[RMDB]
Structure probing data (2A3 and DMS) for a 207-nucleotide construct. Reactivities are given for positions 27 through 156. Conditions: 150 mM KOAc, 10 mM MgCl2 and 150 mM bicine (pH 8.5), 24 C. For DMS the reverse transcriptase was MarathonRT.
RNA sequence: GGGAACGACUCGAGUAGAGUCGAAAAUCCCAAAGGUUGCCGAAUCCGAAAGGUCGGGAGGAACCGCUUUUUGGGGUUAAUCUGCAGUGAAGCUGCAGUAGGGAUACCUUCUGUCCCGCACCCGACAGCUAACUCCGCAGGCAAUAAAGGAAGGAGACGUACUACGUAAUUUCGAUUACGUAGUACGAAAAGAAACAACAACAACAAC
Reactivity to 2A3 in 0.01 (KOAc 150mM, MgCl2 10mM, bicine 150mM(pH8.5), 24C), signal-to-noise 3, nucleotides 027 to 156: u010c010c000c020a030a050a000g080g000u040u010g010c010c010g090a130a120u060c020c020g050a050a070a040g070g010u040c080g040g010g000a020g010g010a060a070c030c020g000c070u160u120u010u050u190g050g000g000g000u020u010a040a020u060c000u000g010c000a010g000u060g240a070a020g140c000u010g040c000a000g000u010a020g020g010g000a000u050a110c030c000u030u030c020u040g010u000c020c000c010g000c020a040c000c000c000g040a090c050a040g000c010u020a010a040c010u010c010c030g080c090a010g000g000c010a000a000u100a050a050a010g030g010a000a000g000g020a030g000a010
Reactivity to DMS in 0.01 (KOAc 150mM, MgCl2 10mM, bicine 150mM(pH8.5), 24C), signal-to-noise 3, nucleotides 027 to 156: u000c030c000c010a100a140a100g010g000u000u000g050c010c020g010a140a220u000c020c010g000a120a140a090g010g020u010c030g010g010g020a160g010g000a140a130c100c080g000c100u010u000u020u040u010g020g010g030g010u000u010a080a140u010c000u000g030c010a030g020u000g000a220a160g020c010u000g000c000a020g000u000a050g000g010g010a040u000a070c080c050u000u000c090u000g000u000c080c000c000g000c130a070c010c010c010g000a110c090a060g000c050u000a110a150c020u000c010c010g010c030a150g000g000c030a090a060u010a060a090a110g000g010a070a080g010g040a300g030a280